[RMDB]
RNA sequence: GGGAACGACUCGAGUAGAGUCGAAAAGCAGGUUACCUACGCGGCUUGGUCAGCCCGACCGGCUUGGCCAGCCGGACCGGUUGGUCGUGCCCACGAAGUUUCACAUGCCUACCCAAAGACCAACGGGUAAUGAACGUCACUUCGGUGACGUUCAUUAAAAAGAAACAACAACAACAAC
Reactivity to DMS in 0.01 (KOAc 150mM, MgCl2 10mM, bicine 150mM(pH8.5), 24C), signal-to-noise 2, nucleotides 027 to 126: g040c040a020g010g010u010u000a080c060c080u000a100c190g020c240g010g010c010u010u000g070g000u000c000a060g010c030c000c130g040a070c260c230g010g000c000u000u010g010g020c050c040a090g000c000c010g010g020a020c090c070g000g000u000u000g010g000u000c000g040u000g010c030c020c020a050c090g020a070a100g000u010u010u000c080a110c080a080u010g000c020c030u010a160c020c010c010a080a080a110g000a060c050c010a030a080c140g000g010g010